[RMDB]
RNA sequence: GGGAACGACUCGAGUAGAGUCGAAAAGUACAGCACUUCGGUGCUGUACAAAUAAAACCUAGUCAAAAUAACGCAAGACUAGGAAAGCGAAAUAAAAUUAAAAAAGAGGAUACUUCGGUAUCCUCAAACAAUAUAAUUCGUUCGCGAAUUAUAUUGUAAAAGAAACAACAACAACAAC
Reactivity to 2A3 in 0.01 (KOAc 150mM, MgCl2 10mM, bicine 150mM(pH8.5), 24C), signal-to-noise 1, nucleotides 027 to 126: g000u010a000c010a040g030c010a020c000u010u050c120g050g000u000g010c000u000g020u000a000c000a000a000a000u050a000a050a000a010c000c000u010a000g020u020c020a060a060a120a280u130a240a080c080g000c160a070a120g000a010c000u010a010g000g000a060a090a010g050c030g060a010a110a020u160a050a090a050a050u190u150a070a060a020a040a060a070g010a000g020g000a000u020a010c000u040u030c190g030g010u000a000u000c000c000u010c010a000a000
Reactivity to DMS in 0.01 (KOAc 150mM, MgCl2 10mM, bicine 150mM(pH8.5), 24C), signal-to-noise 2, nucleotides 027 to 126: g010u000a000c000a060g010c020a000c000u000u020c170g010g010u000g010c000u000g010u000a000c000a010a060a110u020a070a040a090a150c020c010u020a000g020u000c000a080a070a100a070u000a110a180c270g020c140a090a160g000a030c030u000a000g000g000a020a050a070g020c110g000a070a060a080u010a060a090a040a150u050u010a030a030a060a010a080a080g000a020g000g010a020u000a000c000u000u020c200g020g010u000a000u000c010c010u010c000a000a040